[RMDB]
RNA sequence: GGGAACGACUCGAGUAGAGUCGAAAAGUUGUGAGUGUUCGCACUCACAACAAAAAGAUAUGGAUGUACCCAGGGAGUUGGUGGUCGGAAACGACCACUCAACGAGGAUCUGGAUACAUCCUAAGUCAAAAAACCUAUGAUGUUCGCAUCAUAGGAAGACUAACAAUGUGUUCGCACAUUGUUAGUCAAAAGAAACAACAACAACAAC
Reactivity to 2A3 in 0.01 (KOAc 150mM, MgCl2 10mM, bicine 150mM(pH8.5), 24C), signal-to-noise 5, nucleotides 027 to 156: g000u010u000g000u000g000a010g010u010g040u070u250c300g050c080a010c000u000c000a000c000a010a000c000a000a040a000a000a000g010a000u020a000u020g000g000a000u000g000u000a000c000c000c020a000g070g020g010a300g020u010u000g000g000u000g000g000u000c000g000g000a010a000a010c000g000a000c000c010a010c040u130c040a000a000c000g010a060g050g080a190u030c000u000g010g000a000u000a000c000a000u000c020c000u000a000a000g000u010c060a020a010a040a110a070a090c000c000u000a000u000g000a000u000g040u050u150c250g020c100a000u000c000a000u000a000g010g010a010a010
Reactivity to DMS in 0.01 (KOAc 150mM, MgCl2 10mM, bicine 150mM(pH8.5), 24C), signal-to-noise 1, nucleotides 027 to 156: g010u000u000g010u010g010a000g000u010g020u000u000c300g000c000a030c000u020c010a020c000a010a010c000a050a040a120a070a200g000a040u010a080u030g000g020a070u000g000u000a010c000c000c010a030g000g030g020a220g010u010u000g010g020u010g000g000u010c000g030g000a030a030a110c020g030a030c000c000a000c010u000c020a000a020c000g010a230g010g030a110u000c000u020g020g010a000u000a000c000a000u010c000c000u000a000a070g000u020c000a010a100a120a180a160a130c000c010u010a000u000g000a030u000g030u000u010c300g030c000a030u000c020a030u000a000g000g020a000a040
Chemical mapping of a 207-nucleotide RNA with 2A3 and DMS. Source: RMDB library RNAMAK, as collected in RNAgym. The DMS profile rests on 2,666 reads. The RNA was probed in 150 mM KOAc, 10 mM MgCl2 and 150 mM bicine (pH 8.5) at 24 C. In probing experiments dimethyl sulfate is read out at A N1 and C N3, which are open when not base-paired. For 2A3, 6,504 sequencing reads were counted.